[RMDB]
The record gives the reactivity of an RNA of 177 nucleotides to 2A3 and DMS. Values are in units of 0.01, from 0 to 300, in steps of 10. The DMS profile rests on 1,979 reads.

RNA sequence: GGGAACGACUCGAGUAGAGUCGAAAAUUGGAGGCCCAAACUGAAAGUGUAGAAGCUAUCGCACUUUGCACGGCCUUACCUAUAUGUGCGUGUGCUAGUGUCGAUGGUACUGUCGCGCUUUACGAUAAAAUCCUACCAGGUUCGCCUGGUAGGAUUUAAAAGAAACAACAACAACAAC
Reactivity to 2A3 in 0.01 (KOAc 150mM, MgCl2 10mM, bicine 150mM(pH8.5), 24C), signal-to-noise 1, nucleotides 027 to 126: u110u140g020g020a020g010g110c010c000c040a060a030a020c100u090g010a030a010a000g000u010g020u030a080g080a060a050g010c010u080a000u000c010g000c030a000c000u190u110u040g040c010a000c010g040g000c020c000u030u000a060c010c070u140a060u020a000u300g220u110g000c060g140u140g070u040g050c010u000a020g000u060g100u200c030g060a000u010g000g020u080a030c020u120g090u000c000g010c000g120c080u030u040u030a150c100g000a000u030a080
Reactivity to DMS in 0.01 (KOAc 150mM, MgCl2 10mM, bicine 150mM(pH8.5), 24C), signal-to-noise 2, nucleotides 027 to 126: u000u010g030g030a120g010g020c020c000c030a080a110a160c170u010g000a050a020a020g010u010g010u000a120g020a140a120g000c040u000a030u000c000g000c010a010c010u000u010u000g010c010a040c020g000g010c000c010u000u000a040c280c170u000a110u000a010u000g000u020g010c000g040u010g010u010g010c000u010a010g000u000g000u000c040g020a010u000g030g020u000a060c120u020g010u010c030g000c030g000c010u000u000u000a060c110g000a130u010a040